[RMDB]
RNA sequence: GGGAACGACUCGAGUAGAGUCGAAAAGGCCGCUCGUCGGGAAUCGGACACUGGAACUAGUACUCUGGUCAAUGCGGAUUGCCUGUGGCGGUGUUGGCUGGACGACCGAGUGUCGGCGGAUACCUCCGUAGACGAAUAUGUUCGCAUAUUCGUCUACAAAAGAAACAACAACAACAAC
Reactivity to DMS in 0.01 (KOAc 150mM, MgCl2 10mM, bicine 150mM(pH8.5), 24C), signal-to-noise 3, nucleotides 027 to 126: g020g010c000c020g010c030u000c040g020u010c050g010g000g020a130a090u010c040g010g010a060c050a010c030u000g000g010a110a080c090u000a080g020u020a140c180u000c020u010g010g010u000c170a060a080u000g000c010g010g000a070u000u010g010c000c010u000g010u020g020g030c020g010g010u000g020u000u000g000g010c020u000g000g000a030c030g010a250c030c010g000a090g000u000g000u000c030g010g020c030g010g010a100u010a080c030c000u000c130c180
Reactivity to 2A3 in 0.01 (KOAc 150mM, MgCl2 10mM, bicine 150mM(pH8.5), 24C), signal-to-noise 3, nucleotides 027 to 126: g070g000c010c010g030c040u060c050g170u030c040g090g000g000a040a070u050c020g010g020a020c020a010c050u050g070g080a110a030c020u030a030g100u090a060c020u000c010u060g030g070u100c060a050a080u130g020c020g030g070a140u080u120g020c010c020u160g050u140g080g040c010g010g000u000g010u000u050g060g020c020u120g060g030a010c000g020a020c000c030g030a020g060u020g070u070c020g020g020c010g010g000a060u080a090c000c020u020c050c050